[RMDB]
RNA sequence: GGGAACGACUCGAGUAGAGUCGAAAACGGCAUUUCCCCAGCAGCCAUGACCUACAAGGCUGCGGUGCGGCUCGCCGCACAGGUCAUCCCUCAUCGGGCGCGUCCUGCGUCCUUCCACGCCAACCCAAGACCAUUGCUUCCUUCGGGAAGCAAUGAAGAAUCAGGUAUCCUUCGGGAUACCUGAUUCAAAAGAAACAACAACAACAAC
Reactivity to 2A3 in 0.01 (KOAc 150mM, MgCl2 10mM, bicine 150mM(pH8.5), 24C), signal-to-noise 1, nucleotides 027 to 156: c000g000g020c010a010u030u060u090c000c000c000c000a030g000c000a000g000c000c000a120u100g020a020c000c000u070a030c050a040a050g020g000c040u040g000c020g010g030u000g000c000g000g000c000u040c110g170c040c000g000c000a000c030a020g000g010u020c030a100u060c010c010c000u150c070a100u080c100g050g010g000c000g000c000g030u240c070c110u130g000c000g030u000c000c040u030u050c040c000a050c040g000c000c020a030a040c030c030c000a010a000g080a100c070c000a010u000u000g000c010u000u000c000c000u000u070c050g090g000g000a000a000g000c040a000a000u000g000a000a040